RNA sequence: GGGAACGACUCGAGUAGAGUCGAAAAUAGUGUGGUCCAAAAGGAUGGUGUUGAAAACACUCCUCCUCACUAUUUUACUCUUGGAUGCAAAAUUUUAACGCUCACCCCACGCAACAAGUGGAGUGGCCUCUAUCGUGUUGUUCGCAACACGAUAGAGAAAAGAAACAACAACAACAAC
Reactivity to 2A3 in 0.01 (KOAc 150mM, MgCl2 10mM, bicine 150mM(pH8.5), 24C), signal-to-noise 2, nucleotides 027 to 126: u000a000g010u010g000u010g020g000u120c100c040a020a080a040a070g020g010a030u220g030g080u040g020u020u100g130a070a100a040a010c000a000c010u020c000c000u040c000c000u010c010a020c000u000a010u000u030u010u020a060c010u000c000u070u090g170g030a090u100g080c080a080a120a150a160u090u150u120u130a210a070c030g000c030u060c050a010c010c010c030c000a000c020g050c030a090a300c020a250a110g000u000g020g000a010g000u000g010g000c000
Reactivity to DMS in 0.01 (KOAc 150mM, MgCl2 10mM, bicine 150mM(pH8.5), 24C), signal-to-noise 1, nucleotides 027 to 126: u000a000g010u000g000u040g010g020u020c170c090a060a040a080a010g020g000a080u020g030g050u010g000u000u020g040a130a130a120a090c000a050c000u000c000c000u000c010c020u020c010a010c010u010a000u000u000u000u000a120c070u000c000u000u000g030g000a160u000g000c070a070a030a070a080u020u000u000u020a080a190c130g000c040u010c040a030c000c010c010c020a020c000g010c110a080a090c200a070a130g000u000g000g000a020g000u000g020g000c060
This 177-nucleotide RNA was probed chemically with 2A3 and DMS. For 2A3 the reverse transcriptase was SuperScript II with manganese. The data come from the RNA Mapping Database (RMDB), library 15KREP.